[RMDB]
RNA sequence: GGGAACGACUCGAGUAGAGUCGAAAAACAUAAGGGUGAAAGUUCAAGCAAGCUAGCCGGCAAAAAAGCAAACUUGACCACCAAGGAUAAAAGAGAUCUUAUCCAAGGAUGCAAAAGAUAAUCUCACAAAAGCUUCAUUCGUUCGCGAAUGAAGCAAUCAGUAGUUCGUCUUCGGACGAACUACUGAAAAAGAAACAACAACAACAAC
Reactivity to 2A3 in 0.01 (KOAc 150mM, MgCl2 10mM, bicine 150mM(pH8.5), 24C), signal-to-noise 1, nucleotides 027 to 156: a000c040a040u150a050a030g080g000g000u020g050a260a070a080g040u170u060c050a040a000g020c020a100a000g010c000u060a000g030c010c050g080g010c080a000a000a130a130a000a000g010c040a050a040a020c000u030u020g000a010c020c020a040c010c020a040a020g050g000a000u060a030a110a040a020g050a000g010a000u060c020u050u010a000u000c000c020a020a020g040g020a060u060g010c020a000a030a030a050g010a010u060a120a070u100c040u030c020a070c040a060a100a000a000g020c000u020u010c000a000u000u000c000g020u020u110c280g020c000g100a000a000u010g000a000a000g000c000a000a010

Chemical mapping of a 207-nucleotide RNA with 2A3.
Values are in units of 0.01, from 0 to 300, in steps of 10.